An RNA of 177 nucleotides, treated with 2A3 and DMS and read out base by base.
2A3 adducts were read by reverse transcription with SuperScript II with manganese.
It was measured as part of the RMDB library M2PK50.
The DMS profile rests on 1,651 reads.
Conditions: 150 mM KOAc, 10 mM MgCl2 and 150 mM bicine (pH 8.5), 24 C.
Values cover nucleotides 27 to 126.

RNA sequence: GGGAACGACUCGAGUAGAGUCGAAAAGACCUUCAGUUCGCUGAAGGUCGAUGAUGGUAAGAGAGAAUACCAUCUGUUAAGUGAUAUGGAUAAGAUCUCUCAGUGAACGUGCUUUCGAGCACGUUAAGGAUUUGACCAUUUUCGAAUGGUCAAAUCCAAAAGAAACAACAACAACAAC
Reactivity to 2A3 in 0.01 (KOAc 150mM, MgCl2 10mM, bicine 150mM(pH8.5), 24C), signal-to-noise 2, nucleotides 027 to 126: g000a000c010c010u000u000c010a000g000u020u100c120g040c150u010g000a000a020g000g000u000c000g000a010u070g010a000u000g000g040u020a180a030g010a000g000a000g020a130a000u020a040c000c000a000u000c020u000g140u080u180a150a130g150u090g170a050u060a050u300g210g030a080u060a110a040g040a120u000c000u000c010u000c030a040g010u080g260a020a010c010g020u000g000c020u090u080u170c240g070a000g000c000a010c000g000u030u010a010a010
Reactivity to DMS in 0.01 (KOAc 150mM, MgCl2 10mM, bicine 150mM(pH8.5), 24C), signal-to-noise 2, nucleotides 027 to 126: g000a000c000c000u010u000c000a020g010u010u020c240g020c000u010g000a020a000g020g020u000c000g000a030u000g000a040u000g000g020u010a030a150g000a040g000a040g020a030a130u000a010c000c020a010u000c020u000g020u010u000a060a170g040u000g030a120u010a090u000g000g010a070u010a080a040g000a140u010c000u000c010u000c000a260g030u000g010a020a010c000g020u000g000c010u000u000u040c160g010a020g030c010a000c000g020u000u000a030a100